[RMDB]
RNA sequence: GGGAACGACUCGAGUAGAGUCGAAAAGGGGGAUACGCACAGUGACCAUUCAAGCUGAUUGUGACACUGUGUAGGGUAGGUACUGAUUGGUUCUUCAAUCAGUAGAUGGGAAGAAAAUGCCAUAGGAGUUAAUAACAAUGUUCGCAUUGUUAUUAACAAAAGAAACAACAACAACAAC
Reactivity to DMS in 0.01 (KOAc 150mM, MgCl2 10mM, bicine 150mM(pH8.5), 24C), signal-to-noise 5, nucleotides 027 to 126: g000g010g010g000g010a130u000a070c210g010c000a000c000a000g020u010g010a150c020c010a010u000u010c020a150a200g020c300u010g010a030u000u000g020u010g020a150c000a010c000u000g010u000g010u000a100g000g010g000u000a060g010g010u000a000c000u000g000a010u000u000g000g010u010u020c140u000u000c000a000a010u000c000a000g010u000a010g000a150u000g000g000g010a090a090g000a040a030a060a080u010g010c100c090a100u000a100g000g010a200
Reactivity to 2A3 in 0.01 (KOAc 150mM, MgCl2 10mM, bicine 150mM(pH8.5), 24C), signal-to-noise 5, nucleotides 027 to 126: g030g020g010g010g050a040u050a120c080g000c000a000c000a000g000u000g030a100c030c000a010u010u040c050a090a140g180c150u150g090a030u020u050g070u120g060a010c000a000c000u000g000u000g020u010a010g020g000g010u060a070g030g070u020a000c000u010g000a010u010u010g000g040u120u040c020u120u100c010a000a010u000c010a010g000u000a000g010a090u060g000g010g020a010a020g000a030a130a030a030u150g040c040c030a050u080a080g140g000a130
Notes:
The record gives the reactivity of an RNA of 177 nucleotides to DMS and 2A3. DMS adducts were read by reverse transcription with MarathonRT. For 2A3 the reverse transcriptase was SuperScript II with manganese. For 2A3, 7,984 sequencing reads were counted. Source: RMDB library RFMREP, as collected in RNAgym.